Structure probing data (2A3) for a 207-nucleotide construct. The reactions ran in a buffer of 150 mM KOAc, 10 mM MgCl2 and 150 mM bicine (pH 8.5), at 24 C. For 2A3, 844 sequencing reads were counted.
RNA sequence: GGGAACGACUCGAGUAGAGUCGAAAACAGUCCUUCGGGACUGCGAAUGAUAUGGAGUGUAUCACAGUAUUUGUCAGGAGGAGACUCGGAAACGAGUCUUCUCCUUGGAUUUAAUAUCACAGUACACUCCUAAGUCUACAUAGCUUUUCGAAGCUAAUCGGAUACGAUUGUUCGCAAUCGUAUCCGAAAAAGAAACAACAACAACAAC
Reactivity to 2A3 in 0.01 (KOAc 150mM, MgCl2 10mM, bicine 150mM(pH8.5), 24C), signal-to-noise 1, nucleotides 027 to 156: c010a000g000u010c000c000u000u090c280g040g000g010a030c050u050g070c080g120a230a150u200g010a030u040a050u130g000g010a000g000u000g000u000a020u170c000a010c050a130g020u030a060u060u060u030g050u030c030a000g020g000a000g000g000a000g000a000c020u010c050g050g010a050a100a040c010g000a000g000u000c020u000u000c000u020c010c000u000u010g000g000a000u030u210u090a050a000u030a000u100c040a010c000a020g000u000a000c000a000c020u000c000c000u000a000a030g000u070c000u030a130c030a180u100a000g000c010u000u140u010u140c230g140a000a000g010c000u040a010a170